Structure probing data (DMS) for a 177-nucleotide construct. It was measured as part of the RMDB library OK2TST. For DMS, 797 sequencing reads were counted. The reactions ran in a buffer of 150 mM KOAc, 10 mM MgCl2 and 150 mM bicine (pH 8.5), at 24 C. DMS adducts were read by reverse transcription with MarathonRT.

RNA sequence: GGGAACGACUCGAGUAGAGUCGAAAACGCACUAAGUUGUCUCUGAUAAUGAGAAAUGAAGAAGCUAGUAAGCAGCUGGAGGUAUGUCACUUUCCCUAGCACUGCUUGUAAGGGUACCUAGGAACGACACCUACAGGGCUUUCGAGCCCUGUAGGUGAAAAGAAACAACAACAACAAC
Reactivity to DMS in 0.01 (KOAc 150mM, MgCl2 10mM, bicine 150mM(pH8.5), 24C), signal-to-noise 1, nucleotides 027 to 126: c080g000c100a130c130u020a100a170g030u000u000g000u000c000u000c010u020g000a140u020a070a160u010g000a040g010a090a140a040u010g020a140a060g000a120a160g020c030u000a060g020u000a050a060g020c030a010g010c030u000g020g010a040g000g010u000a010u020g000u010c050a080c060u010u000u010c040c010c020u000a100g020c030a130c030u000g000c050u000u030g000u000a030a020g010g020g000u000a010c080c040u000a140g020g000a040a070c200g010a230